[RMDB]
RNA sequence: GGGAACGACUCGAGUAGAGUCGAAAAGAUAUGGACAAUGAUCGACGAUAAGCUGGUAUCGGAAACGAUACCCAGCUUUUGACGUCGAAUUGUCCUAAGUCAAAACACACGGAGUUCGCUCCGUGUGGAUGGGUAAGUAGUUCGCUACUUACCCAUCAAAAGAAACAACAACAACAAC
Reactivity to 2A3 in 0.01 (KOAc 150mM, MgCl2 10mM, bicine 150mM(pH8.5), 24C), signal-to-noise 8, nucleotides 027 to 126: g000a000u030a010u070g000g020a000c000a020a000u130g110a250u180c020g000a000c010g100a210u050a300a000g000c010u000g000g010u000a000u010c000g010g000a030a010a000c000g000a000u010a000c020c000c000a000g000c000u010u010u020u090g100a030c000g010u000c000g010a000a000u000u000g000u000c010c000u000a020a000g010u000c010a040a020a230a060c010a000c000a000c010g020g000a010g020u120u160c280g110c190u000c010c000g000u000g000u000g000
Reactivity to DMS in 0.01 (KOAc 150mM, MgCl2 10mM, bicine 150mM(pH8.5), 24C), signal-to-noise 9, nucleotides 027 to 126: g010a020u000a150u010g000g000a020c000a010a010u000g010a190u010c010g000a020c000g030a140u010a010a010g020c000u000g000g010u000a000u000c000g020g000a030a030a050c000g020a010u000a000c210c090c080a000g010c000u000u000u000u000g020a190c050g020u000c000g000a020a030u000u000g000u000c000c000u000a000a070g000u000c020a120a090a120a300c010a010c000a010c000g010g000a030g010u000u010c300g010c000u000c000c000g030u000g010u000g000

Structure probing data (2A3 and DMS) for a 177-nucleotide construct. The DMS profile rests on 22,934 reads. Source: RMDB library TTRDES, as collected in RNAgym. The reactions ran in a buffer of 150 mM KOAc, 10 mM MgCl2 and 150 mM bicine (pH 8.5), at 24 C.